[RMDB]
RNA sequence: GGGAACGACUCGAGUAGAGUCGAAAAGCAGUUGACUUCGGUCAACUGCAAAUAAAGCUCAAGACGUGCACAGGGAGGAACGUCUUGAGCAACCCUAUAAAAAAACAUGUAAGUUCGCUUACAUGAAGAUGGUUACCCUCUUCGGAGGGUAACCAUCAAAAGAAACAACAACAACAAC
Reactivity to 2A3 in 0.01 (KOAc 150mM, MgCl2 10mM, bicine 150mM(pH8.5), 24C), signal-to-noise 1, nucleotides 027 to 126: g000c000a000g010u010u010g000a010c010u030u040c120g080g000u000c000a000a010c020u010g010c000a000a000a000u000a000a010a000g000c000u000c000a000a000g010a000c010g000u030g060c080a050c070a300g100g130g070a120g040g020a030a000c000g000u000c000u000u000g000a020g010c000a010a000c010c000c010u040a040u290a100a110a030a000a000a020a020c010a000u000g000u010a000a030g020u030u130c240g030c110u020u010a000c010a020u000g030a010a010
Source information: Structure probing data (2A3) for a 177-nucleotide construct. Source: RMDB library M2PK50, as collected in RNAgym. For 2A3 the reverse transcriptase was SuperScript II with manganese.